[RMDB]
RNA sequence: GGGAACGACUCGAGUAGAGUCGAAAAGUCGGGAUAGGCAUAUUUCAGCUCAUCAAGCUGGAAGGUGAUGGGCGCGACGAAAUCGGCGGUCGCUGCAAUGGCUUCAGGAUAAUCGCGGAACAGGCGAACGCUAUAAUGAGUUCGCUCAUUAUAGCGUAAAAGAAACAACAACAACAAC
Reactivity to 2A3 in 0.01 (KOAc 150mM, MgCl2 10mM, bicine 150mM(pH8.5), 24C), signal-to-noise 7, nucleotides 027 to 126: g040u020c010g020g010g060a090u080a090g060g020c030a020u020a080u100u050u020c020a020g000c010u010c020a150u060c060a110a020g020c020u050g040g040a030a030g040g030u040g020a040u040g030g020g000c060g000c030g030a030c040g030a060a030a060u100c040g050g010c030g080g000u040c030g010c070u060g020c040a020a100u090g030g000c010u070u050c050a030g010g040a040u070a150a050u110c020g000c020g050g040a090a040c020a060g070g000c010g020a030
Reactivity to DMS in 0.01 (KOAc 150mM, MgCl2 10mM, bicine 150mM(pH8.5), 24C), signal-to-noise 9, nucleotides 027 to 126: g020u000c040g010g000g010a110u010a070g010g010c040a060u010a110u000u000u000c030a060g010c000u010c140a090u010c280a080a080g010c020u000g000g010a040a040g010g030u000g010a050u000g010g010g010c030g010c050g010a040c060g010a030a070a100u000c070g010g010c050g010g010u000c030g010c030u000g020c080a060a070u010g000g010c030u000u000c060a080g000g010a090u000a080a120u000c030g000c030g010g000a090a090c170a120g000g010c040g010a060